[RMDB]
Notes: Structure probing data (DMS and 2A3) for a 207-nucleotide construct. For DMS, 7,673 sequencing reads were counted. It was measured as part of the RMDB library OK3TST. Conditions: 150 mM KOAc, 10 mM MgCl2 and 150 mM bicine (pH 8.5), 24 C.
RNA sequence: GGGAACGACUCGAGUAGAGUCGAAAACAGGCAUAGAGCCUGGUACUUCACACACCUUGGAGUCCUCAUGGCAAGUUUUUGAAAUCAGUGUUAUUACCUACUUUUUGUAGAUGAGGAAGCUGAGAUCUGGAGAGGCUAAGUGACUUUCCCAGGGCCAACCUAAAUAAAGUUUCGACUUUAUUUAGGUAAAAGAAACAACAACAACAAC
Reactivity to DMS in 0.01 (KOAc 150mM, MgCl2 10mM, bicine 150mM(pH8.5), 24C), signal-to-noise 2, nucleotides 027 to 156: c020a010g010g010c000a150u000a160g010a280g010c000c010u000g030g010u000a040c030u000u010c050a070c070a110c060a050c080c050u000u000g010g010a050g030u000c020c010u010c050a090u000g020g000c050a090a140g010u000u000u010u010u000g010a050a080a240u000c040a030g000u000g020u000u000a070u000u000a020c020c010u000a020c010u000u010u010u000u000g020u010a010g020a010u010g000a020g010g000a050a100g010c010u000g010a050g010a180u010c020u000g020g020a100g010a110g040g020c030u010a070a120g030u000g010a050c000u000u000u000c010c010c010a230g000g010g010c030c030a050
Reactivity to 2A3 in 0.01 (KOAc 150mM, MgCl2 10mM, bicine 150mM(pH8.5), 24C), signal-to-noise 4, nucleotides 027 to 156: c000a010g010g000c020a070u130a260g110a040g090c000c000u000g000g010u040a060c030u070u080c040a040c010a010c010a030c090c010u020u030g020g020a020g020u020c010c020u060c040a100u090g040g000c030a080a140g030u030u050u070u210u200g060a060a060a010u020c010a020g000u020g080u260u120a050u070u070a070c010c010u020a030c030u120u210u150u190u300g040u060a020g020a070u080g010a030g040g030a030a000g010c000u010g020a010g010a070u010c030u060g030g030a060g010a020g090g000c010u020a080a050g030u050g150a020c000u080u110u050c010c010c000a010g000g020g000c020c020a020